The record gives the reactivity of an RNA of 177 nucleotides to DMS and 2A3. For DMS the reverse transcriptase was MarathonRT. It was measured as part of the RMDB library OK1LIB. For DMS, 930 sequencing reads were counted. The reactions ran in a buffer of 150 mM KOAc, 10 mM MgCl2 and 150 mM bicine (pH 8.5), at 24 C. Reactivities are given for positions 27 through 126. 2A3 adducts were read by reverse transcription with SuperScript II with manganese.
RNA sequence: GGGAACGACUCGAGUAGAGUCGAAAAGAAGAGAGUCGACGCAAGCGACGAUAACUGCGGAACGGUAACCGUAGUACCGUACGGUCAUGGCACGCGAAAGCGAAAGACCGAAACAUGCCAUAAGAGAGGACUACUCAUGGUUCGCCAUGAGUAGUCCAAAAGAAACAACAACAACAAC
Reactivity to DMS in 0.01 (KOAc 150mM, MgCl2 10mM, bicine 150mM(pH8.5), 24C), signal-to-noise 1, nucleotides 027 to 126: g000a040a010g000a070g030a060g000u000c090g020a210c060g000c200a160a010g040c030g000a000c010g000a200u070a260a120c000u000g030c040g000g000a000a000c080g000g000u030a000a060c000c000g120u030a200g090u000a000c070c000g030u000a300c000g000g020u000c050a010u000g000g080c040a270c000g000c160g000a050a090a020g050c000g000a180a050a140g000a000c020c020g000a070a010a000c130a020u000g000c010c000a030u030a140a050g000a070g030a140
Reactivity to 2A3 in 0.01 (KOAc 150mM, MgCl2 10mM, bicine 150mM(pH8.5), 24C), signal-to-noise 1, nucleotides 027 to 126: g100a020a030g110a000g000a000g010u100c020g000a100c090g080c060a040a030g140c000g020a000c030g000a050u040a000a060c120u110g020c080g040g000a000a000c000g040g060u080a260a140c000c000g010u060a010g060u060a000c000c000g060u010a120c010g000g000u000c040a010u020g000g000c080a040c080g000c000g060a070a000a000g040c000g000a060a100a030g000a000c000c000g090a000a000a000c080a020u130g000c000c000a000u110a140a000g070a000g000a040